[RMDB]
RNA sequence: GGGAACGACUCGAGUAGAGUCGAAAAUAGGCAUGUGAUUGAUUCAGAUGAACCGUUCGUGCCUACGCAUGUACUAGGUAAACUGAAACCACUAGACGUGGUGCGCAUCGUGCAAGGUAGUCAGAGCGCAUAUGGACUGUUUCGACAGUCCAUAUGCAAAAGAAACAACAACAACAAC
Reactivity to DMS in 0.01 (KOAc 150mM, MgCl2 10mM, bicine 150mM(pH8.5), 24C), signal-to-noise 5, nucleotides 027 to 126: u000a030g000g010c010a030u000g020u010g010a040u000u020g020a090u000u000c010a200g020a150u020g010a070a020c010c050g000u000u000c010g010u000g010c010c030u000a060c180g010c040a040u000g010u000a070c050u010a080g010g000u000a050a090a120c090u000g010a090a140a090c050c020a040c020u000a090g010a120c160g020u000g000g010u000g010c080g020c050a080u000c080g000u020g000c070a070a050g010g010u000a080g000u000c070a070g000a140g000c160
Reactivity to 2A3 in 0.01 (KOAc 150mM, MgCl2 10mM, bicine 150mM(pH8.5), 24C), signal-to-noise 4, nucleotides 027 to 126: u090a000g040g010c020a020u030g060u080g070a070u140u140g060a050u010u040c020a030g260a300u150g010a160a030c000c010g000u040u020c000g010u020g000c000c030u040a060c080g010c000a030u080g020u070a070c030u040a060g090g000u090a080a100a030c030u040g070a100a030a030c020c000a010c050u050a050g040a210c090g050u040g030g000u020g000c020g000c010a090u100c040g020u010g030c020a060a050g060g030u040a010g050u060c050a000g030a020g080c060
The record gives the reactivity of an RNA of 177 nucleotides to DMS and 2A3. Reactivities are given for positions 27 through 126.